[RMDB]
RNA sequence: GGGAACGACUCGAGUAGAGUCGAAAAUCCACUAUGAAUCUAGUCACUAAAUAAACACAAUUAGCUUCUGUGUGUAAUAGUGAGUGUUGAUAACACAAAAUAAUAGUAUAGUUUUGGAAGAUUAUACGCGCCCUUGCUCCGUUCGCGGAGCAAGGAAGUGAUUAACUAGGUUCGCCUAGUUAAUCACAAAAGAAACAACAACAACAAC
Reactivity to 2A3 in 0.01 (KOAc 150mM, MgCl2 10mM, bicine 150mM(pH8.5), 24C), signal-to-noise 6, nucleotides 027 to 156: u000c010c010a040c080u150a160u290g100a140a040u050c090u100a050g100u020c010a000c000u020a050a020a070u040a020a040a000c010a000c010a040a130u150u120a120g150c150u200u070c110u070g010u000g000u000g000u020a010a060u010a030g000u010g010a030g000u030g010u010u040g080a140u230a290a020c030a010c030a030a130a080a020u210a110a080u090a100g020u010a010u000a030g020u000u040u110u130g110g040a090a030g010a080u020u010a020u040a030c030g050c000g060c060c000c000u000u000g000c010u000c010c020g010u030u010c080g020c000g090g000a000g000c000a000a000g000g000a000a000
Reactivity to DMS in 0.01 (KOAc 150mM, MgCl2 10mM, bicine 150mM(pH8.5), 24C), signal-to-noise 2, nucleotides 027 to 156: u010c010c020a150c120u000a140u020g000a150a130u010c070u000a190g020u020c010a040c030u010a040a030a060u000a140a190a020c010a030c020a000a130u010u000a230g010c120u000u000c080u010g020u010g000u000g010u010a080a250u000a000g020u000g020a060g040u000g000u000u000g000a100u020a060a150c050a110c060a080a030a070a100u020a080a300u000a090g010u010a040u000a010g020u000u000u000u020g010g020a180a210g020a010u010u000a030u000a010c000g020c120g000c110c000c000u000u000g020c000u000c010c010g030u000u010c270g040c040g020g010a010g020c010a000a000g000g010a000a040